[RMDB]
RNA sequence: GGGAACGACUCGAGUAGAGUCGAAAAACCACAGAUGUCCUGACAGAUCUGUGCUUGUCCUCUCAGCUUCAUGCCCUCACCGCUGGACUGAAGGCUUUCACCUCCUGGACUGCAAACACUGGCAUUGAAGCAUGUCGGAUGGCUUGUGGUGGGCAUGCGAAACAACCUUGUUCGCAAGGUUGUUUCGAAAAGAAACAACAACAACAAC
Reactivity to 2A3 in 0.01 (KOAc 150mM, MgCl2 10mM, bicine 150mM(pH8.5), 24C), signal-to-noise 4, nucleotides 027 to 156: a000c010c000a020c020a010g040a000u070g060u150c050c050u210g100a050c050a060g110a050u010c020u030g010u030g010c050u150u130g050u060c000c010u010c020u050c060a020g030c020u070u010c000a010u030g000c010c010c020u080c040a060c030c040g030c040u040g000g020a030c000u040g040a030a030g040g010c000u060u200u100c070a070c010c000u020c010c040u030g030g030a030c010u050g000c020a060a080a030c030a020c070u050g000g000c010a000u020u220g050a050a020g040c030a010u040g000u010c000g000g100a210u040g030g040c070u060u060g050u040g040g040u060g010g000g000c060a030u080g060
Reactivity to DMS in 0.01 (KOAc 150mM, MgCl2 10mM, bicine 150mM(pH8.5), 24C), signal-to-noise 1, nucleotides 027 to 156: a110c100c000a030c020a030g010a010u020g000u010c010c040u010g050a130c020a010g020a040u000c010u010g020u010g010c210u000u000g000u000c030c010u000c020u010c030a210g020c060u020u020c010a060u000g000c000c010c010u000c080a110c070c120g040c010u020g020g020a130c010u000g020a040a010g020g010c030u000u000u000c180a080c040c010u020c020c010u000g000g020a080c010u000g020c000a180a090a080c020a080c030u000g010g010c020a070u000u000g060a130a080g030c080a050u000g020u010c030g050g000a050u000g000g040c070u000u000g020u000g000g030u000g000g000g110c020a080u000g010